[RMDB]
This 177-nucleotide RNA was probed chemically with 2A3 and DMS.
RNA sequence: GGGAACGACUCGAGUAGAGUCGAAAACAUUCUCCACCCGUGGGCUGAGCCACAGCAGGGUUGAUGUUGGCAGGGAGCACUCCCAGAGGGGAAUCGGAGUCCUGUGUGUGUGCUGGGAGGACGGAGAUAGGGUAAAGAAGUUCGCUUCUUUACCCUAAAAAGAAACAACAACAACAAC
Reactivity to 2A3 in 0.01 (KOAc 150mM, MgCl2 10mM, bicine 150mM(pH8.5), 24C), signal-to-noise 2, nucleotides 027 to 126: c010a060u070u060c030u000c000c010a060c020c000c040g050u120g030g200g000c050u080g020a010g030c010c000a040c000a030g000c010a010g100g050g000u040u060g070a090u070g080u220u110g000g050c030a040g030g020g070a020g070c060a050c030u000c000c010c030a020g060a040g040g020g000g010a000a080u090c030g050g050a050g050u030c010c010u080g000u050g020u020g010u010g030u050g090c010u030g020g000g010a040g000g020a020c040g010g000a050g000a050
Reactivity to DMS in 0.01 (KOAc 150mM, MgCl2 10mM, bicine 150mM(pH8.5), 24C), signal-to-noise 5, nucleotides 027 to 126: c150a230u010u000c010u000c000c050a170c040c020c030g030u000g000g000g000c060u000g010a120g020c040c040a050c030a080g010c040a070g000g000g010u000u010g010a050u000g000u000u000g020g010c060a120g000g010g010a090g010c120a150c080u000c000c000c020a070g010a120g000g000g000g000a070a060u000c120g010g010a150g010u000c020c020u000g000u000g020u010g020u000g010u010g010c020u010g000g000g010a110g010g000a080c100g000g000a060g000a130

It was measured as part of the RMDB library OK2TRN. 2A3 adducts were read by reverse transcription with SuperScript II with manganese. For 2A3, 1,774 sequencing reads were counted. The RNA was probed in 150 mM KOAc, 10 mM MgCl2 and 150 mM bicine (pH 8.5) at 24 C.